[RMDB]
RNA sequence: GGGAACGACUCGAGUAGAGUCGAAAACUGUAAUAGACAAUCAAGACACUGGUCUGGGAAGGGAACCUGUCUAUGCUGAGUGUGGGCUCAGGUAGUUCCCAUUGUAGACCUCGACUUGGCCUUGAAGAAUAGAGGUAUUGUUCGCAAUACCUCUAUUAAAAGAAACAACAACAACAAC
Reactivity to DMS in 0.01 (KOAc 150mM, MgCl2 10mM, bicine 150mM(pH8.5), 24C), signal-to-noise 9, nucleotides 027 to 126: c040u000g010u010a110a110u010a080g010a090c110a150a110u000c030a040a020g010a070c050a120c100u000g000g010u000c010u000g010g000g020a080a090g010g010g000a030a030c150c170u010g010u010c120u010a060u010g010c020u000g000a030g010u000g020u010g020g000g000c010u000c040a010g000g010u000a050g000u000u000c000c000c000a150u010u000g010u000a060g010a070c010c000u000c130g000a090c060u000u000g010g000c060c020u000u000g000a080a110g000
Reactivity to 2A3 in 0.01 (KOAc 150mM, MgCl2 10mM, bicine 150mM(pH8.5), 24C), signal-to-noise 7, nucleotides 027 to 126: c020u040g050u130a100a150u100a260g120a060c050a030a100u060c010a020a010g020a040c050a030c210u070g020g010u010c010u010g020g060g010a040a050g030g000g010a010a010c030c040u080g070u090c040u080a070u150g160c020u030g030a060g040u160g060u210g110g240g000c010u020c040a010g000g020u010a020g010u010u010c000c000c000a000u000u050g020u000a020g040a040c000c000u010c040g020a030c030u020u030g020g000c010c010u030u060g060a080a040g060

Notes:
The record gives the reactivity of an RNA of 177 nucleotides to DMS and 2A3. The reactions ran in a buffer of 150 mM KOAc, 10 mM MgCl2 and 150 mM bicine (pH 8.5), at 24 C. For DMS the reverse transcriptase was MarathonRT. For 2A3 the reverse transcriptase was SuperScript II with manganese. The data come from the RNA Mapping Database (RMDB), library OK2TST. Values cover nucleotides 27 to 126. For 2A3, 11,377 sequencing reads were counted. The DMS profile rests on 18,006 reads.